[RMDB]
An RNA of 207 nucleotides, treated with DMS and 2A3 and read out base by base. The reactions ran in a buffer of 150 mM KOAc, 10 mM MgCl2 and 150 mM bicine (pH 8.5), at 24 C. Source: RMDB library M2RFPK, as collected in RNAgym. 2A3 adducts were read by reverse transcription with SuperScript II with manganese. For DMS the reverse transcriptase was MarathonRT.

RNA sequence: GGGAACGACUCGAGUAGAGUCGAAAACGACAAGGGUGUAAAGAUCGCUCUUUUACUCGGCAUGAUACCACCGUUAUCGGGUCAACAGAGUAGUUGCAAAUGACAACAAUGCUCAGGGUUAUGCUCGAAAAGUUCGUACCCUUCGGGGUACGAACAAUCUAAAGGUCUUGUUCGCAAGACCUUUAGAAAAAGAAACAACAACAACAAC
Reactivity to DMS in 0.01 (KOAc 150mM, MgCl2 10mM, bicine 150mM(pH8.5), 24C), signal-to-noise 2, nucleotides 027 to 156: c070g040a060c140a060a070g030g010g020u000g030u010a100a050a100g000a180u010c050g000c090u000c010u000u000u000u000a030c050u020c030g040g000c030a090u000g000a070u000a050c020c020a150c020c040g000u000u000a050u010c110g030g010g020u000c020a100a070c050a150g000a020g000u000a070g000u000u020g000c000a040a080a150u000g020a120c010a020a060c020a060a070u010g000c040u000c010a090g010g040g000u010u000a120u000g030c030u000c020g000a040a020a120a160g000u000u000c000g020u000a000c000c000c000u000u020c270g060g020g000g020u000a000c010g000a000a000c000a020a040
Reactivity to 2A3 in 0.01 (KOAc 150mM, MgCl2 10mM, bicine 150mM(pH8.5), 24C), signal-to-noise 3, nucleotides 027 to 156: c020g110a020c060a020a020g050g040g010u020g060u140a160a100a070g090a120u230c030g000c040u040c020u040u120u050u090a110c090u010c010g000g000c020a000u030g000a010u110a170c010c030a010c000c000g070u100u090a070u230c060g000g040g030u060c040a030a030c020a020g030a020g000u050a050g020u020u000g040c050a100a190a250u230g050a140c020a010a000c000a060a080u100g010c000u030c040a020g030g000g000u020u070a030u070g030c030u050c240g000a020a020a050a060g000u000u000c000g000u000a000c000c010c000u010u020c140g090g000g000g000u000a000c000g010a000a000c000a010a000